[RMDB]
RNA sequence: GGGAACGACUCGAGUAGAGUCGAAAACCCUUGACAAGUUGCGUGAUUAUUUAGCUGACUAUGACGUAGCAGUCACUGCCGGCCCAUUCAUGGAUAAUGCUAUUAAUGUUGGUGGUACAGGAUUACAGUAUAGUAGGAACUUCGGUUCCUACUAUACAAAAGAAACAACAACAACAAC
Reactivity to 2A3 in 0.01 (KOAc 150mM, MgCl2 10mM, bicine 150mM(pH8.5), 24C), signal-to-noise 2, nucleotides 027 to 126: c000c000c000u020u120g010a040c020a080a100g020u020u060g000c010g040u050g170a070u000u090a070u110u190u080a080g030c110u060g000a050c010u050a060u140g030a020c030g000u030a000g030c020a010g040u020c030a000c060u050g030c030c000g050g000c020c010c010a000u030u050c020a030u010g030g010a050u090a160a040u160g010c040u050a030u120u040a090a030u040g060u070u070g030g050u010g010g010u030a050c010a000g040g070a040u060u090a030c010a000
Reactivity to DMS in 0.01 (KOAc 150mM, MgCl2 10mM, bicine 150mM(pH8.5), 24C), signal-to-noise 5, nucleotides 027 to 126: c010c000c010u010u000g020a080c100a110a110g020u000u000g020c040g040u010g000a080u000u010a090u010u010u000a100g010c030u010g000a060c060u000a080u000g010a070c090g020u000a080g030c070a100g000u000c020a080c100u000g010c030c010g010g010c040c050c060a040u010u010c090a060u000g000g010a070u000a100a080u010g000c020u000a060u000u000a060a060u010g010u010u000g010g010u000g000g020u000a070c100a070g010g000a090u010u000a060c180a140
The record gives the reactivity of an RNA of 177 nucleotides to 2A3 and DMS.
Source: RMDB library 15KREP, as collected in RNAgym.
For 2A3, 1,290 sequencing reads were counted.
The reactions ran in a buffer of 150 mM KOAc, 10 mM MgCl2 and 150 mM bicine (pH 8.5), at 24 C.